[RMDB]
RNA sequence: GGGAACGACUCGAGUAGAGUCGAAAACAAGAGAAUAUCGGCGCAUUUACAGCCAGAAGGCUCAAACGUCAGUCUUGACUUAACUUUCUUACUAGUAGACAGCGAAGAAAUGAAGCAGGAGAAACAAUAGUAAUCACACAUUCGUGUGUGAUUACUAAAAAGAAACAACAACAACAAC
Reactivity to 2A3 in 0.01 (KOAc 150mM, MgCl2 10mM, bicine 150mM(pH8.5), 24C), signal-to-noise 2, nucleotides 027 to 126: c010a030a060g030a010g040a150a120u070a060u250c080g030g000c020g020c030a020u030u070u140a120c050a010g000c000c000a050g080a170a060g030g000c040u030c010a060a060a000c030g020u030c010a080g030u000c050u060u100g070a240c000u060u040a040a070c000u050u080u020c030u020u040a080c030u000a030g140u030a040g080a160c060a000g010c050g100a030a020g030a060a060a020u110g030a020a010g000c010a000g000g030a000g030a050a060a000c050a070a030
Reactivity to DMS in 0.01 (KOAc 150mM, MgCl2 10mM, bicine 150mM(pH8.5), 24C), signal-to-noise 4, nucleotides 027 to 126: c050a080a100g000a090g000a130a080u010a070u000c070g010g020c020g010c060a090u000u010u010a080c140a040g020c030c030a060g020a100a070g040g000c030u000c120a050a040a090c120g000u000c030a060g010u010c050u010u000g020a080c040u000u000a060a080c130u000u000u000c030u000u010a070c040u000a080g000u010a100g000a060c070a040g000c060g000a070a050g000a030a070a040u000g020a080a070g010c050a030g000g000a050g010a120a060a050c150a060a120